[RMDB]
RNA sequence: GGGAACGACUCGAGUAGAGUCGAAAAUGAACACGCAGCCGCCCAGCAAGGCUAUCUGAUAUUAAUUGGUGAUUGCGCACAACAAACCCAGCAAGAGCGCACAUUUGUUAAUCUGAUUAUCACCAAAGCUAAUAAUCGGGUUCGCCCGAUUAUUAGCAAAAGAAACAACAACAACAAC
Reactivity to DMS in 0.01 (KOAc 150mM, MgCl2 10mM, bicine 150mM(pH8.5), 24C), signal-to-noise 2, nucleotides 027 to 126: u000g000a120a060c160a130c070g000c060a100g010c090c100g000c030c020c090a130g010c060a090a110g000g010c040u000a050u010c070u000g000a090u010a060u010u010a050a090u020u000g010g010u020g000a060u000u000g000c020g020c000a100c040a110a020c140a100a050a160c020c030c010a100g020c180a060a090g040a060g000c000g000c020a100c190a060u000u020u000g000u010u000a010a150u000c060u000g000a040u000u000a070u000c010a050c020c030a000a040a180
Reactivity to 2A3 in 0.01 (KOAc 150mM, MgCl2 10mM, bicine 150mM(pH8.5), 24C), signal-to-noise 1, nucleotides 027 to 126: u040g000a000a040c020a010c160g030c000a000g080c010c050g040c010c000c000a010g040c090a050a010g080g000c020u020a030u120c050u150g060a020u030a060u300u110a160a120u020u070g030g000u010g010a060u070u060g000c030g000c000a010c000a210a000c050a010a150a000c000c050c010a030g040c070a070a020g080a020g030c030g150c010a010c040a040u100u100u110g030u030u060a110a140u090c070u000g120a090u100u180a010u030c000a000c000c000a000a020a030

This 177-nucleotide RNA was probed chemically with DMS and 2A3.